[RMDB]
The record gives the reactivity of an RNA of 207 nucleotides to DMS and 2A3. For 2A3 the reverse transcriptase was SuperScript II with manganese.
RNA sequence: GGGAACGACUCGAGUAGAGUCGAAAAGGGGUCAUCUGUAGCACGAGGAUCGAGAGGUACACCUGAAGCCUCCACGGGUGUACUACCCACCUCGAUCUACCCACCGUGCGAAACAGAUGACGGAGGCACCCAAAAACCCUCGAUUCGUCGAGGGUAACUCUUUAACUUGGUUCGCCAAGUUAAAGAGAAAAGAAACAACAACAACAAC
Reactivity to DMS in 0.01 (KOAc 150mM, MgCl2 10mM, bicine 150mM(pH8.5), 24C), signal-to-noise 2, nucleotides 027 to 156: g010g010g040g030u000c010a030u010c040u010g030u000a150g010c020a040c020g020a180g020g000a020u000c010g030a060g000a220g040g010u030a010c020a050c020c000u010g000a090a140g050c000c000u000c010c010a300c040g000g000g040u030g000u000a010c010u000a070c020c010c050a300c090c000u020c040g010a030u000c000u000a000c000c000c040a300c070c010g020u000g000c010g000a110a050a110c000a030g000a000u010g030a020c000g020g000a020g000g000c020a020c060c020c010a040a080a060a100a050c000c000c000u000c000g000a070u000u030c240g000u000c000g020a040g030g020g000u000a000a030
Reactivity to 2A3 in 0.01 (KOAc 150mM, MgCl2 10mM, bicine 150mM(pH8.5), 24C), signal-to-noise 3, nucleotides 027 to 156: g020g000g020g010u010c000a000u000c000u010g020u040a030g010c020a000c010g000a010g000g010a000u000c010g000a000g000a010g010g000u000a000c000a000c000c010u020g010a080a010g000c000c000u000c000c000a000c000g000g000g020u000g000u000a000c000u020a020c040c060c010a070c010c000u000c000g000a000u000c000u030a030c060c080c020a060c020c010g000u000g000c010g020a120a030a000c010a010g000a000u010g000a000c030g000g000a000g010g000c000a040c000c000c000a070a080a020a020a010c000c010c000u000c000g020a020u030u070c200g040u010c000g140a000g010g000g000u000a010a010
Record summary:
For DMS, 2,724 sequencing reads were counted. Values cover nucleotides 27 to 156. DMS adducts were read by reverse transcription with MarathonRT.